[RMDB]
An RNA of 207 nucleotides, treated with 2A3 and read out base by base. It was measured as part of the RMDB library RSTRND. The RNA was probed in 150 mM KOAc, 10 mM MgCl2 and 150 mM bicine (pH 8.5) at 24 C. For 2A3, 2,680 sequencing reads were counted.

RNA sequence: GGGAACGACUCGAGUAGAGUCGAAAAUUCCCAAAUUGCGGGAACACCCUAAUGCUCUCACUUCCAAGCUGACAUUUGAAAGAAUGCAGUGGCCAGGCUAAUCACCUGGGUAUGGACAUAACGUCGAGAGAUGAUACAAUGGGCUAUCCGCAUCCUUGAAGACUAUACGGUUCGCCGUAUAGUCUUCAAAAGAAACAACAACAACAAC
Reactivity to 2A3 in 0.01 (KOAc 150mM, MgCl2 10mM, bicine 150mM(pH8.5), 24C), signal-to-noise 2, nucleotides 027 to 156: u030u010c000c000c020a000a050a050u060u040g000c020g000g010g020a060a020c020a030c050c000c000u060a060a010u300g000c000u000c000u000c000a010c000u020u000c100c300a000a000g000c020u020g140a270c010a030u010u010u070g120a080a070a030g020a020a010u010g000c000a000g000u060g040g000c000c000a000g010g000c010u010a020a000u020c010a000c020c010u000g000g010g010u060a270u080g000g000a000c000a030u040a020a000c020g010u120c160g010a000g000a000g000a010u010g010a020u030a080c010a010a030u030g000g000g010c010u020a080u070c000c000g000c000a010u010c010c020u020u030